Chemical mapping of a 207-nucleotide RNA with 2A3 and DMS. The DMS profile rests on 3,767 reads. Conditions: 150 mM KOAc, 10 mM MgCl2 and 150 mM bicine (pH 8.5), 24 C.
[RMDB]
RNA sequence: GGGAACGACUCGAGUAGAGUCGAAAACCCCGCCGCGAUGAGCCUCGGCCGCCUUUGCCGCCUACUGAAGCCGGCGCUGCUCUGUGGGGCUCUGGCCGCGCCUGGCCUGGCCGGGACCAUGUGCGCGUCCCGGGACGACUGGCGCUGUGCGCGCUCCCACUUACCUAUAGUUCGCUAUAGGUAAGUGAAAAGAAACAACAACAACAAC
Reactivity to 2A3 in 0.01 (KOAc 150mM, MgCl2 10mM, bicine 150mM(pH8.5), 24C), signal-to-noise 3, nucleotides 027 to 156: c010c000c000c020g020c020c000g000c040g120a150u090g000a010g010c000c010u020c010g040g010c060c010g040c020c040u110u160u180g020c020c020g050c040c020u230a230c110u260g120a140a020g030c060c010g010g000c010g000c030u040g010c000u000c060u110g130u190g030g000g000g000c010u010c020u020g040g000c020c010g010c010g000c000c020u050g020g020c010c010u050g080g050c000c000g000g000g000a000c000c010a120u250g140u240g200c120g020c090g060u000c000c000c000g010g000g010a090c030g010a030c030u020g000g000c010g000c040u030g020u060g030c010g010c010g010c030u060c000c030
Reactivity to DMS in 0.01 (KOAc 150mM, MgCl2 10mM, bicine 150mM(pH8.5), 24C), signal-to-noise 2, nucleotides 027 to 156: c040c000c020c050g020c030c010g020c030g020a080u000g000a120g030c020c020u020c030g000g030c170c060g010c040c040u030u010u010g030c070c020g020c030c020u060a300c090u010g010a070a070g040c030c050g030g030c060g000c090u000g020c020u000c050u000g020u000g010g000g060g000c010u010c010u000g020g020c010c020g000c030g020c010c010u010g070g030c030c000u000g030g010c020c060g010g000g010a030c000c030a090u000g040u000g040c120g030c090g010u000c010c010c000g020g010g000a070c060g000a040c020u000g030g010c010g020c020u010g030u000g010c090g030c010g000c020u010c020c020

Source: RMDB library PDB130, as collected in RNAgym.